Chemical mapping of a 177-nucleotide RNA with DMS and 2A3.

[RMDB]
RNA sequence: GGGAACGACUCGAGUAGAGUCGAAAACGCGGGUUUCUCCACCGCCAACCCGGGUCGGCUGUACCUGCCGCCCAGCCAGGACCCGGUUUACGGGUAUCAGGCCGUCAACGUCGAGGCGCAACGCGACGUAGUUCACCCACUUCGGUGGGUGAACUACAAAAGAAACAACAACAACAAC
Reactivity to DMS in 0.01 (KOAc 150mM, MgCl2 10mM, bicine 150mM(pH8.5), 24C), signal-to-noise 1, nucleotides 027 to 126: c220g000c000g000g040g000u010u000u010c060u010c060c030a210c000c030g000c020c240a070a030c060c000c020g000g040g010u000c030g040g000c030u000g000u000a100c100c060u040g020c030c000g000c040c030c040a110g010c030c010a030g000g020a120c020c000c030g000g010u030u020u010a020c050g000g020g000u000a020u000c030a080g050g070c030c030g010u030c110a150a070c120g010u060c010g000a110g000g110c020g050c100a060a030c170g020c020g040a010c050
Reactivity to 2A3 in 0.01 (KOAc 150mM, MgCl2 10mM, bicine 150mM(pH8.5), 24C), signal-to-noise 2, nucleotides 027 to 126: c060g010c030g020g000g020u020u110u070c110u030c000c020a050c000c010g000c020c020a060a080c000c020c000g000g020g010u120c060g020g000c010u020g050u200a140c000c050u010g010c000c010g010c000c000c000a000g000c000c000a010g040g110a040c010c010c020g000g000u010u020u070a030c000g020g000g000u050a070u160c030a020g060g000c030c020g050u030c060a140a080c050g050u050c010g050a040g020g020c000g020c020a040a060c040g000c020g070a050c050
For 2A3, 1,723 sequencing reads were counted.
Values are in units of 0.01, from 0 to 300, in steps of 10.